[RMDB]
RNA sequence: GGGAACGACUCGAGUAGAGUCGAAAAGAAAGAAAGAAAGAAAUCUGACAGAAUGACGGAUUCGAUCGUUGUGGUCGGCGGGCCACCACGUCAUUCCUUCGCACUGUCUCCGGGUAGACCGCCAUAAAAAAGCGGAUCUACUUCGGUAGAUCCGCAACAUCAUCUAAUCGUUCGCGAUUAGAUGAUGAAAAGAAACAACAACAACAAC
Reactivity to DMS in 0.01 (KOAc 150mM, MgCl2 10mM, bicine 150mM(pH8.5), 24C), signal-to-noise 2, nucleotides 027 to 156: g020a160a050a040g010a050a090a050g020a100a040a120g000a090a090a140u000c040u000g030a210c070a070g000a070a080u000g000a060c050g000g000a090u000u010c080g020a070u020c080g050u000u000g030u000g010g020u000c020g010g040c090g000g040g010c000c000a010c030c050a030c010g040u000c000a050u000u000c000c030u000u000c080g060c090a240c060u000g010u010c010u000c030c040g030g000g000u000a020g000a040c000c020g020c000c010a100u030a000a090a100a090a090a150g040c000g000g000a000u000c000u000a000c000u000u000c190g040g040u010a010g000a030u000c010c000g000c000a020a070
Reactivity to 2A3 in 0.01 (KOAc 150mM, MgCl2 10mM, bicine 150mM(pH8.5), 24C), signal-to-noise 6, nucleotides 027 to 156: g040a010a080a000g060a020a070a020g090a060a120a020g080a040a160a040u120c080u090g010a010c010a020g090a120a160u110g020a020c030g000g030a020u080u120c120g020a070u260c070g020u020u020g000u010g010g020u020c040g040g090c080g040g040g010c000c000a000c000c010a010c000g000u000c010a020u050u010c000c000u030u050c030g020c030a020c030u010g000u010c000u010c040c010g010g010g030u020a030g040a080c020c020g030c040c020a080u270a040a100a010a030a010a010g010c000g000g000a000u000c000u000a000c010u010u020c040g050g000u000a000g000a000u010c000c000g000c010a000a010